[RMDB]
RNA sequence: GGGAACGACUCGAGUAGAGUCGAAAACUUCUGUAACGCUCCAUCUUCAGGUAAAGCUUCUCAUUUUGUCCAAAAGUUGUAGAAUAAAAACUGAUAUAGAACUUAAUAAGUUAAACUGGGCGGAUGAAGUCCAUUUUACAUUCGUGUAAAAUGGACUAAAAGAAACAACAACAACAAC
Reactivity to 2A3 in 0.01 (KOAc 150mM, MgCl2 10mM, bicine 150mM(pH8.5), 24C), signal-to-noise 1, nucleotides 027 to 126: c000u050u020c000u060g110u060a110a000c050g000c020u000c010c010a060u050c010u040u040c030a010g010g050u120a000a050a050g010c020u080u030c000u000c050a100u040u050u040u040g010u010c010c030a000a060a120a060g040u080u090g070u130a080g060a160a090u030a100a180a000a000a020c030u000g000a000u050a000u040a180g050a020a000c000u000u030a050a030u100a180a090g020u030u060a030a030a060c060u030g000g050g020c000g030g080a070u060g040a050
Reactivity to DMS in 0.01 (KOAc 150mM, MgCl2 10mM, bicine 150mM(pH8.5), 24C), signal-to-noise 2, nucleotides 027 to 126: c070u010u040c070u000g000u030a120a110c050g030c040u000c030c030a090u000c090u000u000c060a040g020g010u030a060a070a150g020c130u010u000c010u000c020a040u000u000u000u010g000u000c060c110a060a090a060a030g020u020u000g010u000a040g010a040a090u010a090a070a080a080a070c030u000g000a070u010a140u000a120g000a040a060c000u000u000a060a090u020a100a070g000u000u000a060a030a130c110u010g000g000g010c030g000g020a090u000g000a060
Chemical mapping of a 177-nucleotide RNA with 2A3 and DMS. The reactions ran in a buffer of 150 mM KOAc, 10 mM MgCl2 and 150 mM bicine (pH 8.5), at 24 C. For 2A3 the reverse transcriptase was SuperScript II with manganese. It was measured as part of the RMDB library OK2TST.